[RMDB]
RNA sequence: GGGAACGACUCGAGUAGAGUCGAAAAUAAUCAAGAUGAAUCGUUUUUAGUUUGCUUGCUUACCUUAGGGGCCAGCAUGAGAUCGACUUGAAUCUUUUUAUGUAGGCAGAGAGCGACGGAAUUUAAAGGUACUAUAAUGAUUCGUCAUUAUAGUACCAAAAGAAACAACAACAACAAC
Reactivity to DMS in 0.01 (KOAc 150mM, MgCl2 10mM, bicine 150mM(pH8.5), 24C), signal-to-noise 6, nucleotides 027 to 126: u030a070a050u030c060a050a060g000a080u010g000a070a080u000c060g010u010u000u020u010u020a100g020u010u010u020g010c010u000u000g020c050u000u020a180c040c090u000u030a110g030g000g000g000c030c060a140g000c030a030u020g000a040g010a030u000c040g010a090c120u020u010g000a090a060u000c000u000u010u020u000u040a030u020g010u010a090g000g000c050a140g000a070g000a050g010c050g000a040c060g010g010a050a050u020u040u010a050a090a140
Reactivity to 2A3 in 0.01 (KOAc 150mM, MgCl2 10mM, bicine 150mM(pH8.5), 24C), signal-to-noise 9, nucleotides 027 to 126: u140a000a060u080c050a020a010g020a050u110g070a030a110u040c060g050u020u010u020u050u060a180g050u060u080u110g020c010u010u010g000c010u050u140a170c010c000u070u130a100g010g000g040g000c000c010a000g000c010a020u040g020a020g000a040u020c010g040a030c060u030u050g060a040a050u020c010u020u060u020u030u030a120u130g080u060a030g060g010c070a010g020a010g000a010g120c040g030a040c040g040g060a060a050u070u120u110a180a140a010
This 177-nucleotide RNA was probed chemically with DMS and 2A3. The DMS profile rests on 17,325 reads. Conditions: 150 mM KOAc, 10 mM MgCl2 and 150 mM bicine (pH 8.5), 24 C. Source: RMDB library OK1LIB, as collected in RNAgym. 2A3 adducts were read by reverse transcription with SuperScript II with manganese.